[RMDB]
RNA sequence: GGGAACGACUCGAGUAGAGUCGAAAAAUGUGGCCUUUUCCACCGUAGCCGAGGGUGAUCUCCCACUGGGAUCGACCGUCUACCUCUACAGACCGGCGGCGAGGAGCGCACGGAUCACCGAUCUGUAGUAUUGACCUGCAUUCGUGCAGGUCAAUACAAAAGAAACAACAACAACAAC
Reactivity to 2A3 in 0.01 (KOAc 150mM, MgCl2 10mM, bicine 150mM(pH8.5), 24C), signal-to-noise 2, nucleotides 027 to 126: a000u190g040u120g100g010c060c050u040u010u070u070c030c050a050c010c020g090u050a020g050c030c030g020a100g090g060g000u040g010a040u000c040u030c040c050c010a100c130u180g010g000g030a040u000c030g080a200c010c020g010u010c010u060a090c030c040u100c030u070a040c000a080g000a040c050c020g030g020c000g010g000c010g020a040g070g030a030g040c060g030c050a040c050g020g010a070u020c040a030c080c090g050a060u000c020u020g040u060a040
Reactivity to DMS in 0.01 (KOAc 150mM, MgCl2 10mM, bicine 150mM(pH8.5), 24C), signal-to-noise 2, nucleotides 027 to 126: a100u010g040u000g010g020c040c020u000u000u000u000c020c020a100c090c090g030u000a070g020c060c060g000a100g000g000g000u010g040a020u000c040u000c020c060c090a070c300u010g020g010g010a070u000c050g010a090c010c030g010u000c020u000a080c050c060u000c030u010a050c090a030g020a060c090c060g000g000c050g010g000c060g030a140g000g000a150g010c080g030c050a070c060g000g010a070u020c020a120c080c040g000a050u000c020u000g010u010a100
Notes: The data come from the RNA Mapping Database (RMDB), library OK2TST. An RNA of 177 nucleotides, treated with 2A3 and DMS and read out base by base. The RNA was probed in 150 mM KOAc, 10 mM MgCl2 and 150 mM bicine (pH 8.5) at 24 C. The DMS profile rests on 1,847 reads. Reactivities are given for positions 27 through 126.